Description
Chemical mapping of a 207-nucleotide RNA with 2A3. The data come from the RNA Mapping Database (RMDB), library OK3TST. Conditions: 150 mM KOAc, 10 mM MgCl2 and 150 mM bicine (pH 8.5), 24 C.
RNA sequence: GGGAACGACUCGAGUAGAGUCGAAAACUGAGAGGGCGUCAGACAAAAGAGCUGUCUCCGCCUCAUCGAAAGAGACAGACUCGAUAUUUGUGGAAUAUGUCAAGGAUAAAAGAACGCCAAAAAUCUGUCCAAACUUUGAAGAAGCAAGGGCGUUCGACGUCUCGUUCUAGUUCGCUAGAACGAGACGAAAAGAAACAACAACAACAAC
Reactivity to 2A3 in 0.01 (KOAc 150mM, MgCl2 10mM, bicine 150mM(pH8.5), 24C), signal-to-noise 1, nucleotides 027 to 156: c050u030g000a000g000a040g050g050g050c060g000u050c050a000g000a090c010a000a020a000a000g030a060g000c000u000g000u030c000u000c000c010g000c000c080u090c080a260u250c050g230a060a150a000g030a010g030a000c000a000g050a150c060u000c040g020a050u030a030u090u200u050g140u140g020g090a100a050u100a000u170g010u050c130a060a080g080g000a080u240a150a110a000a000g000a000a000c000g090c080c090a010a010a010a010a010u140c000u120g090u000c000c080a130a220a220c160u300u140u290g060a170a120g000a030a030g040c030a010a010g070g000g000c000g000u000u000c000g000a000